[RMDB]
RNA sequence: GGGAACGACUCGAGUAGAGUCGAAAAAUACCCGGUGGGCUUGACCACGCCGAGCUAGUACUGAGGGCGGCUGGCCGCGUAGAGGUAAGCCUGGUGCCGUGGAGGAUCUACACCGGUAUAGUGACUGUAAUUAUACGUCGUUCGCGACGUAUAAUUAAAAAGAAACAACAACAACAAC
Reactivity to 2A3 in 0.01 (KOAc 150mM, MgCl2 10mM, bicine 150mM(pH8.5), 24C), signal-to-noise 8, nucleotides 027 to 126: a000u140a050c010c000c000g000g040u130g010g010g000c010u050u050g120a060c000c010a020c030g010c050c020g030a030g010c000u020a030g050u080a180c030u090g090a120g020g120g030c030g020g020c050u070g070g040c000c000g000c020g020u070a080g060a060g150g020u020a020a010g020c000c010u040g050g050u130g040c030c020g030u080g040g050a070g040g020a030u010c000u070a050c010a020c030c020g010g030u080a080u080a080g100u080g050a040c040u040g010
Reactivity to DMS in 0.01 (KOAc 150mM, MgCl2 10mM, bicine 150mM(pH8.5), 24C), signal-to-noise 6, nucleotides 027 to 126: a050u020a060c100c000c000g020g020u010g000g000g000c070u000u010g000a230c030c010a050c030g010c040c040g020a080g000c010u020a090g030u010a060c040u020g010a300g010g010g020c040g010g010c020u000g010g020c010c010g000c030g010u000a050g010a250g000g000u010a050a040g010c010c000u000g010g020u040g000c110c040g010u000g000g010a080g000g010a130u010c020u010a120c040a030c030c010g010g010u010a050u010a090g010u000g000a250c030u010g010
This 177-nucleotide RNA was probed chemically with 2A3 and DMS. Reactivities are rounded to 0.1 and cut off at 0 and 3. For 2A3, 7,466 sequencing reads were counted. 2A3 adducts were read by reverse transcription with SuperScript II with manganese. The reactions ran in a buffer of 150 mM KOAc, 10 mM MgCl2 and 150 mM bicine (pH 8.5), at 24 C.